[RMDB]
RNA sequence: GGGAACGACUCGAGUAGAGUCGAAAACGUUCGCCACCGGCAGCGUGGUGCUCGUCGAGAAGCUCAUCGACGACCGACCCGACUUCUGACCCACUGAUACACCGACCCCGCCACCACCCGGUGCGCGGUUCACAGCUCAGUUCGCUGAGCUGUGAACAAAAGAAACAACAACAACAAC
Reactivity to 2A3 in 0.01 (KOAc 150mM, MgCl2 10mM, bicine 150mM(pH8.5), 24C), signal-to-noise 3, nucleotides 027 to 126: c010g060u070u040c040g020c020c020a050c020c060g090g030c010a020g010c040g090u060g000g050u050g020c020u020c020g020u000c020g000a010g050a150a050g090c050u050c080a100u020c050g030a020c000g010a020c020c030g040a040c000c030c020g040a070c000u080u000c050u070g090a090c000c020c000a040c060u040g040a060u050a150c050a010c040c020g020a080c030c010c020c000g030c000c000a000c000c010a040c010c040c040g010g000u030g000c090g000c000g020
Reactivity to DMS in 0.01 (KOAc 150mM, MgCl2 10mM, bicine 150mM(pH8.5), 24C), signal-to-noise 5, nucleotides 027 to 126: c080g010u000u010c040g010c010c020a070c070c060g010g010c120a090g000c100g000u010g010g020u000g000c170u000c020g020u000c010g000a040g010a120a150g010c140u010c100a130u000c020g010a050c040g000a030c070c030g010a120c030c000c020g020a110c060u000u000c040u000g020a140c010c010c000a080c100u010g000a120u000a080c080a070c070c050g000a100c030c030c010c020g010c010c010a030c010c010a150c200c120c200g010g000u000g000c140g030c040g010

An RNA of 177 nucleotides, treated with 2A3 and DMS and read out base by base. The RNA was probed in 150 mM KOAc, 10 mM MgCl2 and 150 mM bicine (pH 8.5) at 24 C. For 2A3, 3,897 sequencing reads were counted. For DMS the reverse transcriptase was MarathonRT. It was measured as part of the RMDB library OK2TST.